An RNA of 207 nucleotides, treated with DMS and 2A3 and read out base by base. Values cover nucleotides 27 to 156. The RNA was probed in 150 mM KOAc, 10 mM MgCl2 and 150 mM bicine (pH 8.5) at 24 C. 2A3 adducts were read by reverse transcription with SuperScript II with manganese. For DMS, 6,106 sequencing reads were counted.

RNA sequence: GGGAACGACUCGAGUAGAGUCGAAAAUAACACUGGCGGCUGCGUAUCACUCUAGGGUACGUGAUAGUGCGAUAUAAGAAGCACUGGUACAUGCUGGCAGGGACAGUUAAGAGAUGGCCGCAGUCUCAAAAGGGGUCAUUCUUCGGAAUGACCCCAACCUUAUGCACAAGUUCGCUUGUGCAUAAGGAAAAGAAACAACAACAACAAC
Reactivity to DMS in 0.01 (KOAc 150mM, MgCl2 10mM, bicine 150mM(pH8.5), 24C), signal-to-noise 3, nucleotides 027 to 156: u000a060a100c090a050c060u000g000g030c020g010g040c010u000g000c040g000u000a050u000c010a100c070u010c040u010a140g010g000g030u000a010c010g050u000g010a090u010a040g000u000g010c020g010a170u000a140u010a180a180g010a170a270g000c010a010c020u000g000g010u000a030c060a100u000g000c020u000g020g020c050a100g010g010g030a070c030a040g010u000u000a080a110g010a110g020a120u000g020g000c060c030g000c020a140g010u000c000u010c040a050a070a160a230g010g010g000g040u000c000a010u000u010c000u000u000c300g040g000a020a000u000g010a030c000c010c010c000a020a000
Reactivity to 2A3 in 0.01 (KOAc 150mM, MgCl2 10mM, bicine 150mM(pH8.5), 24C), signal-to-noise 3, nucleotides 027 to 156: u100a020a050c040a030c060u060g150g000c040g020g010c000u030g000c010g030u020a060u120c020a080c130u070c080u150a110g090g080g000u010a010c010g020u040g060a050u110a090g000u000g000c010g030a000u020a010u050a300a050g140a080a020g000c000a000c000u000g010g050u070a040c030a030u130g000c000u010g040g020c030a060g020g040g020a030c020a020g030u050u050a130a030g010a010g000a050u020g020g000c000c000g040c000a000g020u000c010u010c040a060a120a030a040g000g000g000g000u000c000a010u000u000c000u020u030c150g090g020a000a000u000g020a010c000c040c000c000a000a000